Annotation: This 207-nucleotide RNA was probed chemically with 2A3. It was measured as part of the RMDB library ARCHII. Values are in units of 0.01, from 0 to 300, in steps of 10.
RNA sequence: GGGAACGACUCGAGUAGAGUCGAAAACGGGGCGGACCGCAUGAGGCUGGCUUCACAGAGCAGUGAACAGCUCCCGCUCUGUGCAGUGGAAGGAUAAUGGGUCGGUGUCUUAUCAAGUUCAGUAACGCCUAAUGGGUUGCUCCAAUAAACAACCACCGCUUACAACUUCGUUCGCGAAGUUGUAAGCAAAAGAAACAACAACAACAAC
Reactivity to 2A3 in 0.01 (KOAc 150mM, MgCl2 10mM, bicine 150mM(pH8.5), 24C), signal-to-noise 1, nucleotides 027 to 156: c020g000g010g000g030c050g010g000a030c020c000g190c100a050u050g030a050g030g000c020u020g020g050c000u000u030c020a020c010a010g120a000g060c050a040g040u040g210a150a030c000a150g030c020u090c030c000c000g000c010u000c040u030g000u020g000c060a030g000u010g030g140a080a080g030g020a030u140a140a050u240g000g100g030u040c000g020g010u010g030u020c040u010u070a040u100c060a030a110g010u070u050c050a040g060u030a070a020c080g000c010c020u080a080a070u010g050g000g000u000u030g000c000u000c000c010a000a040u050a050a050a030c050a020a000c040c010a000c040c010